The record gives the reactivity of an RNA of 177 nucleotides to 2A3 and DMS.
The DMS profile rests on 5,664 reads.
Reactivities are given for positions 27 through 126.
RNA sequence: GGGAACGACUCGAGUAGAGUCGAAAACUUGCAAGAUAAGACUGGCGACUUUAUGUCUACAAUUAUUACUUCCUGCCAAACUGCUGUUAGUAAGCUUCUAGAUACAUGUUUUGAAGCUACAGAAGCACAUACAUUGUACGUUCGCGUACAAUGUAUGAAAAGAAACAACAACAACAAC
Reactivity to 2A3 in 0.01 (KOAc 150mM, MgCl2 10mM, bicine 150mM(pH8.5), 24C), signal-to-noise 7, nucleotides 027 to 126: c020u020u100g020c050a050a020g010a140u070a050a030g040a060c040u030g000g030c020g030a030c010u110u180u150a100u230g010u000c000u020a030c020a050a070u090u060a050u070u060a090c020u030u020c000c020u010g040c000c020a080a100a060c080u050g010c010u020g020u140u050a050g010u030a130a040g000c000u000u000c020u030a010g010a050u060a130c100a130u210g060u020u040u020u020g010a000a000g010c000u000a000c000a010g070a040a000g010c010a010
Reactivity to DMS in 0.01 (KOAc 150mM, MgCl2 10mM, bicine 150mM(pH8.5), 24C), signal-to-noise 5, nucleotides 027 to 126: c090u000u000g010c060a060a060g010a060u000a060a040g000a080c070u000g010g000c090g000a080c030u000u010u020a060u030g010u000c010u010a080c050a020a050u000u000a060u000u000a090c130u000u000c030c030u000g020c060c200a050a100a090c210u000g000c010u000g010u000u010a080g010u000a060a050g010c000u000u000c010u010a030g000a060u010a080c250a100u010g000u000u000u000u000g000a020a020g000c000u000a020c020a070g000a130a030g020c050a150

The 2A3 profile rests on 9,425 reads.